[RMDB]
RNA sequence: GGGAACGACUCGAGUAGAGUCGAAAAACCGAUGACACCGCUGCUCGUUUCGAAGCUUACGGUUGGCAUGUGGUUCGUGGUGUUGAUGGUCAUAACGCUGAUUCCAUCAAAGCGGCCAUCGAAGAAGAUCACUACCCGUAUUCGUACGGGUAGUGAUAAAAGAAACAACAACAACAAC
Reactivity to 2A3 in 0.01 (KOAc 150mM, MgCl2 10mM, bicine 150mM(pH8.5), 24C), signal-to-noise 4, nucleotides 027 to 126: a000c020c010g030a040u050g000a000c000a000c030c000g000c040u050g000c000u020c070g110u020u240u170c120g080a130a020g000c010u080u100a030c050g030g000u080u070g000g020c010a040u060g050u050g080g030u090u160c060g020u090g100g020u100g060u080u090g000a000u010g020g000u060c040a080u080a260a030c100g020c070u000g010a110u160u040c010c010a000u050c040a030a080a010g010c010g000g000c010c000a030u060c040g010a080a050g030a060a010g020
Reactivity to DMS in 0.01 (KOAc 150mM, MgCl2 10mM, bicine 150mM(pH8.5), 24C), signal-to-noise 6, nucleotides 027 to 126: a070c010c010g000a030u000g000a050c030a020c030c000g020c140u010g010c010u000c020g000u010u000u000c120g010a110a050g010c020u010u010a060c030g000g010u010u000g010g010c020a010u010g020u000g020g000u000u000c090g020u000g010g020u000g010u020u000g000a010u010g010g010u010c110a140u010a110a120c140g010c100u010g020a170u000u000c040c030a040u000c110a030a120a060g010c040g000g000c010c000a010u000c040g010a080a100g000a110a100g000